An RNA of 177 nucleotides, treated with DMS and 2A3 and read out base by base.
The 2A3 profile rests on 4,789 reads.
Source: RMDB library TTRDES, as collected in RNAgym.
For DMS, 1,787 sequencing reads were counted.
High 2A3 reactivity points to a flexible backbone, as in loops and unpaired stretches.
The RNA was probed in 150 mM KOAc, 10 mM MgCl2 and 150 mM bicine (pH 8.5) at 24 C.
RNA sequence: GGGAACGACUCGAGUAGAGUCGAAAAGAUAUGGAUACGUUGCAUGGUCAACAGCCUCACUCGGAAACGAGUGAGGACAUGACCUGCACUGCGUAUCCUAAGUCAAAACCCAAUGUUCGCAUUGGGACGAUACUGCUACCUUCGGGUAGCAGUAUCGAAAAGAAACAACAACAACAAC
Reactivity to DMS in 0.01 (KOAc 150mM, MgCl2 10mM, bicine 150mM(pH8.5), 24C), signal-to-noise 3, nucleotides 027 to 126: g000a010u000a300u020g000g010a010u000a000c010g010u000u000g020c020a050u010g180g010u000c010a060a090c220a240g000c000c000u030c000a010c000u000c010g000g000a110a090a210c010g010a020g010u010g020a020g000g000a000c090a090u010g000a000c020c000u000g000c000a050c300u010g000c010g000u000a020u000c000c000u000a020a090g000u000c030a050a100a090a160c030c000c000a000a010u000g020u000u030c300g030c010a020u000u000g020g000g000a150
Reactivity to 2A3 in 0.01 (KOAc 150mM, MgCl2 10mM, bicine 150mM(pH8.5), 24C), signal-to-noise 2, nucleotides 027 to 126: g020a030u070a030u120g020g000a010u010a020c030g020u140u060g040c070a190u300g010g000u000c020a050a140c160a300g080c000c010u000c000a000c000u030c000g050g000a080a090a070c010g010a000g000u000g000a000g000g030a000c000a020u010g000a000c000c000u000g000c000a000c070u120g020c000g000u000a010u010c000c000u010a080a000g040u010c020a000a040a090a300c000c000c000a020a010u060g020u120u170c300g000c200a020u010u040g000g000g050a050